[RMDB]
RNA sequence: GGGAACGACUCGAGUAGAGUCGAAAAGAUCGAGGAUCCCAUGAGCCAGCUCAACCGCCUGAUGCAGUGGGAUAUGAACCAGAUCGACGAUCGGGAGUAUCGCCGCCGCCUCUGAGCCCCUCUCGCCAAGUCUAAAUAUGUUCGCAUAUUUAGACUUAAAAGAAACAACAACAACAAC
Reactivity to 2A3 in 0.01 (KOAc 150mM, MgCl2 10mM, bicine 150mM(pH8.5), 24C), signal-to-noise 9, nucleotides 027 to 126: g040a020u110c060g020a070g090g040a040u030c000c010c000a010u050g010a010g040c010c010a010g010c020u050c090a070a110c070c040g060c020c020u050g020a060u120g010c010a020g020u040g010g020g020a010u030a050u120g050a040a060c010c020a030g010a050u030c040g090a080c090g020a040u030c010g010g030g000a050g030u060a040u080c030g030c100c010g010c010c010g010c000c010u030c030u040g040a030g000c000c000c010c000u020c010u010c010g050c030c030
Reactivity to DMS in 0.01 (KOAc 150mM, MgCl2 10mM, bicine 150mM(pH8.5), 24C), signal-to-noise 9, nucleotides 027 to 126: g000a050u010c040g010a110g010g000a080u000c010c010c010a080u010g000a280g010c040c040a060g000c040u010c100a100a130c110c120g010c150c020u010g010a060u020g010c030a270g010u000g000g000g000a040u000a040u010g010a110a160c040c020a090g000a040u000c020g010a130c130g000a050u000c020g010g010g010a140g010u010a040u010c040g010c020c020g020c050c030g000c020c030u010c030u010g000a130g010c020c010c020c030u000c010u000c040g010c100c100